[RMDB]
RNA sequence: GGGAACGACUCGAGUAGAGUCGAAAAAUUCUUAUAACAAGAAAUGUUGUAAUUGAUAGAUAUGUUAAAAAAUUAAUUGGAGGAGGGAAUGAUGCAUGUUGUGAAAUUUUUGCAACCAAUAGUACUGGUUUAUCUAGGGUUUCGACCCUAGAUAAACAAAAGAAACAACAACAACAAC
Reactivity to DMS in 0.01 (KOAc 150mM, MgCl2 10mM, bicine 150mM(pH8.5), 24C), signal-to-noise 2, nucleotides 027 to 126: a050u000u000c010u030u040a060u020a050a080c050a060a110g000a080a190a100u030g000u020u010g000u000a080a100u010u000g000a090u030a100g010a090u020a020u030g000u020u010a000a000a030a020a050a020u010u000a020a060u010u000g010g000a070g000g000a070g030g000g000a030a030u010g000a070u020g020c020a040u000g000u000u000g040u000g010a030a080a150u020u000u010u000u050g000c080a030a070c050c040a040a040u030a070g000u020a100c090u010g000
Reactivity to 2A3 in 0.01 (KOAc 150mM, MgCl2 10mM, bicine 150mM(pH8.5), 24C), signal-to-noise 2, nucleotides 027 to 126: a000u010u000c000u000u110a120u140a030a030c010a070a000g100a220a120a010u090g000u010u010g040u010a050a110u020u090g000a020u110a190g020a040u060a050u160g060u130u090a050a170a040a040a000a000u070u200a010a080u140u030g020g000a030g030g030a020g010g010g040a100a000u010g050a030u070g000c130a030u030g030u030u040g010u030g100a010a060a210u260u150u090u000u020g030c010a000a000c020c000a000a100u030a190g030u040a030c000u060g030
An RNA of 177 nucleotides, treated with DMS and 2A3 and read out base by base.
The data come from the RNA Mapping Database (RMDB), library RFM100.
Conditions: 150 mM KOAc, 10 mM MgCl2 and 150 mM bicine (pH 8.5), 24 C.
The DMS profile rests on 2,592 reads.
DMS adducts were read by reverse transcription with MarathonRT.